[RMDB]
RNA sequence: GGGAACGACUCGAGUAGAGUCGAAAACACUGACGCGCUGGACGAGACGCAGCUCUCGGCCCUGCUGGUGGCCUGGCAGGAGGCGUCCGGUAUCUCUGUGGGGGAAUAGCGAGCCUCUGCCUCCUCCUCGAUAACGAGGAGCAAGCGGAGGCUAUCGCAUCAGAGUCGAUUUCGAUCGACUCUGAUGAAAAGAAACAACAACAACAAC
Reactivity to 2A3 in 0.01 (KOAc 150mM, MgCl2 10mM, bicine 150mM(pH8.5), 24C), signal-to-noise 2, nucleotides 027 to 156: c100a020c030u080g060a000c010g050c010g020c100u090g000g070a010c000g010a030g010a010c020g020c230a100g010c090u010c000u030c020g000g000c020c030c000u040g010c020u020g040g060u070g130g000c060c020u030g000g000c000a000g010g030a050g050g010c020g000u010c020c040g060g000u070a090u040c040u010c040u120g030u090g030g040g000g000g050a060a080u100a080g050c030g000a000g060c000c000u010c000u010g000c000c010u040c040c000u030c020c020u020c030g120a180u080a300a170c050g000a000g000g000a000g010c000a080a000g000c000g000g020a000g000g000c000u000a000u000c000g000
Reactivity to DMS in 0.01 (KOAc 150mM, MgCl2 10mM, bicine 150mM(pH8.5), 24C), signal-to-noise 2, nucleotides 027 to 156: c030a040c030u010g000a090c000g030c070g000c080u000g040g030a050c000g020a090g010a050c040g000c070a140g010c100u000c020u000c000g010g000c030c000c020u010g000c000u000g090g030u000g000g010c140c020u020g020g010c000a070g000g000a100g030g010c000g000u000c040c040g030g040u000a080u010c040u020c030u010g010u000g000g060g010g030g020a100a100u000a110g000c010g030a080g010c000c000u000c000u000g000c010c010u010c160c000u010c000c010u010c030g000a240u010a130a220c050g040a030g030g010a080g110c080a030a000g010c000g020g000a030g020g020c010u000a000u000c020g000
Notes: This 207-nucleotide RNA was probed chemically with 2A3 and DMS. Reactivities are rounded to 0.1 and cut off at 0 and 3. Conditions: 150 mM KOAc, 10 mM MgCl2 and 150 mM bicine (pH 8.5), 24 C. The 2A3 profile rests on 1,247 reads. The DMS profile rests on 3,785 reads. It was measured as part of the RMDB library OK3TST.